[RMDB]
RNA sequence: GGGAACGACUCGAGUAGAGUCGAAAAGGGCCCCUCGCUCGUAUCUCCGAGAGGAGACGAGAAGGAGGCGGAUCUCCCUUUGCCAUCCGAGGGGACUGCGUCCUCCUUACGGAUGCCCAGGUCGGACCUAUAAUAGGUUCUUCGGAACCUAUUAUAGAAAAGAAACAACAACAACAAC
Reactivity to 2A3 in 0.01 (KOAc 150mM, MgCl2 10mM, bicine 150mM(pH8.5), 24C), signal-to-noise 3, nucleotides 027 to 126: g010g000g020c030c000c000c000u000c010g010c000u010c000g050u080a160u040c000u000c010c000g050a040g010a040g080g010a000g000a000c000g020a000g030a010a110g210g020a010g000g020c140g020g020a050u050c090u080c030c000c000u020u010u040g020c020c010a010u000c000c010g000a020g020g010g000g000a010c050u170g070c190g050u010c000c010u070c000c010u050u090a050c010g000g010a010u020g010c000c000c000a030g020g070u030c020g010g030a040c000
Reactivity to DMS in 0.01 (KOAc 150mM, MgCl2 10mM, bicine 150mM(pH8.5), 24C), signal-to-noise 6, nucleotides 027 to 126: g000g010g000c030c010c000c010u000c040g010c010u000c000g010u010a120u000c010u000c000c010g020a300g000a260g020g010a020g010a020c010g000a010g010a060a070g010g010a030g010g000c140g020g010a190u010c150u020c020c000c000u000u000u000g010c250c020a020u000c020c000g020a110g000g000g000g000a020c010u020g010c190g010u000c010c000u010c000c080u000u000a120c040g000g010a020u000g010c020c010c010a150g010g010u000c030g000g010a300c130